[RMDB]
RNA sequence: GGGAACGACUCGAGUAGAGUCGAAAAUCGUGCAGUAAGUUGAUGGGGUCCCAGGUUAUUUUGUCCCGGGACUACGUCAACUACUAGCACGCAAAGGGUAUGGCCACACUUCGGUGUGGCCAUACCCGGAAGUUAUAUCGUUCGCGAUAUAACUUCCAAAAGAAACAACAACAACAAC
Reactivity to 2A3 in 0.01 (KOAc 150mM, MgCl2 10mM, bicine 150mM(pH8.5), 24C), signal-to-noise 3, nucleotides 027 to 126: u100c010g000u010g000c010a010g000u130a300a000g000u070u000g020a000u030g020g070g000g020u000c020c020c010a000g040g030u140u110a230u210u300u250u290g170u090c000c000c000g010g000g010a000c000u010a020c000g000u000c000a010a000c000u000a000c000u000a030g020c010a000c000g000c000a130a160a020g000g000g000u010a000u000g010g000c050c000a000c010a000c040u060u060c220g080g000u000g030u030g000g020c000c000a000u000a000c010c000c000
Reactivity to DMS in 0.01 (KOAc 150mM, MgCl2 10mM, bicine 150mM(pH8.5), 24C), signal-to-noise 1, nucleotides 027 to 126: u010c000g010u000g010c000a030g010u000a050a080g010u000u010g000a020u000g010g010g000g020u000c020c000c000a050g000g010u000u000a140u000u010u010u000g000u010c020c000c030g000g000g000a030c000u000a020c010g000u000c000a000a010c000u000a000c010u000a130g040c000a000c000g000c300a060a060a110g000g000g000u010a000u000g000g000c010c000a030c040a020c010u000u020c160g010g030u020g020u000g010g010c000c010a010u000a000c000c000c000
An RNA of 177 nucleotides, treated with 2A3 and DMS and read out base by base. Conditions: 150 mM KOAc, 10 mM MgCl2 and 150 mM bicine (pH 8.5), 24 C. It was measured as part of the RMDB library RFMREP. 2A3 adducts were read by reverse transcription with SuperScript II with manganese.